[RMDB]
RNA sequence: GGGAACGACUCGAGUAGAGUCGAAAAGAAUGAUUAUGGAAAUUGAUGAGGAAUUGGUAAACAAACUUAUUGAGUCACACAAAGAGGGUGGCAGAGAGCAAGUGAUUGACGAUAUAAACAAAGGUGUAAACCUAUCUAGGGAACACCCUAUGGUUCAUCACUACGAACUCUUCGGAGUUCGUAGUGAAAAAGAAACAACAACAACAAC
Reactivity to 2A3 in 0.01 (KOAc 150mM, MgCl2 10mM, bicine 150mM(pH8.5), 24C), signal-to-noise 2, nucleotides 027 to 156: g000a000a070u150g040a040u150u100a050u240g020g040a000a100a040u080u090g030a060u000g020a010g040g020a010a070u070u070g000g010u210a020a070a030c050a070a060a000c000u070u020a030u070u080g010a030g030u020c010a010c000a000c000a130a080a140g060a040g020g020g010u030g010g020c060a000g050a000g000a000g000c040a140a000g010u000g080a110u000u110g000a040c130g070a020u090a010u070a200a060a000c050a080a140a080g040g010u070g170u130a230a300a030c000c000u050a070u190c090u090a030g020g000g000a030a020c010a040c000c000c020u060a080u060g040g000u030u060c010a000

An RNA of 207 nucleotides, treated with 2A3 and read out base by base.
High 2A3 reactivity points to a flexible backbone, as in loops and unpaired stretches.
Conditions: 150 mM KOAc, 10 mM MgCl2 and 150 mM bicine (pH 8.5), 24 C.
It was measured as part of the RMDB library OK3TST.